[RMDB]
RNA sequence: GGGAACGACUCGAGUAGAGUCGAAAAGCCGUCUUCGGACGGCAGUAUUUCCUAAGUCAUCGGAGGCACUCGACAUGAUCGCAUUCGGAAACGAAUGCGAUCAACAGCGAGUGCUCCCCACCCGAUGAUAUGGAUCUUCCGAACCUUCGGGUUCGAAAAGUAAUAUGUCUUUCGAGACAUAUUACUUAAAAGAAACAACAACAACAAC
Reactivity to DMS in 0.01 (KOAc 150mM, MgCl2 10mM, bicine 150mM(pH8.5), 24C), signal-to-noise 3, nucleotides 027 to 156: g020c010c010g040u000c010u000u010c300g030g020a020c000g010g000c010a010g020u020a060u010u000u010c000c020u000a060a220g010u000c010a030u000c000g030g010a300g000g010c000a020c000u010c000g020a040c040a300u000g000a010u000c000g010c010a010u000u000c000g010g010a140a130a300c010g020a030a000u000g000c000g000a000u000c000a010a020c090a150g000c000g000a020g000u010g010c000u000c010c010c010c060a300c240c000c000g000a030u000g010a030u000a150u000g000g000a180u000c050u000u000c040c010g010a030a010c010c000u000u000c300g000g040g010u010u000c000g000a000a040
Reactivity to 2A3 in 0.01 (KOAc 150mM, MgCl2 10mM, bicine 150mM(pH8.5), 24C), signal-to-noise 2, nucleotides 027 to 156: g010c000c000g000u020c000u030u050c230g110g000a000c000g020g000c010a000g000u050a110u030u090u020c000c000u020a140a080g020u000c000a000u000c010g020g000a010g000g000c000a000c000u020c000g130a140c080a080u070g000a000u000c000g010c000a000u000u010c010g030g030a060a050a060c020g000a010a000u000g000c010g000a000u010c000a000a010c030a010g050c000g000a000g000u000g000c000u020c010c000c000c000a020c000c000c000g000a010u010g010a000u000a040u080g030g010a040u060c070u130u040c110c030g010a020a010c000c010u060u090c300g050g000g000u020u000c000g010a040a190
The record gives the reactivity of an RNA of 207 nucleotides to DMS and 2A3. In probing experiments dimethyl sulfate is read out at A N1 and C N3, which are open when not base-paired. DMS adducts were read by reverse transcription with MarathonRT. For DMS, 5,786 sequencing reads were counted.